Chemical mapping of a 177-nucleotide RNA with DMS and 2A3. The reactions ran in a buffer of 150 mM KOAc, 10 mM MgCl2 and 150 mM bicine (pH 8.5), at 24 C. Values cover nucleotides 27 to 126.
RNA sequence: GGGAACGACUCGAGUAGAGUCGAAAAGCGAGGGUUCCUUUGAACGGUUCUUAAUUCCAGGCUGUCAUAUGCACCUGCCACCGCUUUUCGUCAAGAAACAGAAACCGCAACAGGGUGUCGCAGUAAUAACGUACUUUUAUUUCGAUAAAAGUACGUUAAAAGAAACAACAACAACAAC
Reactivity to DMS in 0.01 (KOAc 150mM, MgCl2 10mM, bicine 150mM(pH8.5), 24C), signal-to-noise 9, nucleotides 027 to 126: g010c020g020a090g000g000g010u000u000c020c050u000u010u020g000a120a080c070g000g010u000u020c040u010u020a080a130u020u010c080c090a070g000g010c050u010g000u010c060a060u020a070u010g010c070a060c050c010u010g010c030c030a090c110c030g000c020u000u000u000u000c030g000u010c090a080a100g000a100a080a060c150a080g000a070a050a080c050c030g000c080a060a080c130a080g010g010g020u010g000u000c050g010c050a070g000u010a070a120u010
Reactivity to 2A3 in 0.01 (KOAc 150mM, MgCl2 10mM, bicine 150mM(pH8.5), 24C), signal-to-noise 9, nucleotides 027 to 126: g030c020g010a060g010g030g020u020u070c030c000u050u020u100g070a070a020c030g030g040u130u120c030u080u190a150a140u180u070c040c010a010g030g000c020u030g040u080c020a040u050a040u280g020c020a030c020c020u040g020c020c020a040c030c000g010c000u030u040u040u020c030g010u030c060a090a050g050a100a100a010c040a020g080a060a060a030c030c020g020c040a050a050c010a090g060g000g020u030g030u050c030g000c050a010g040u090a070a100u040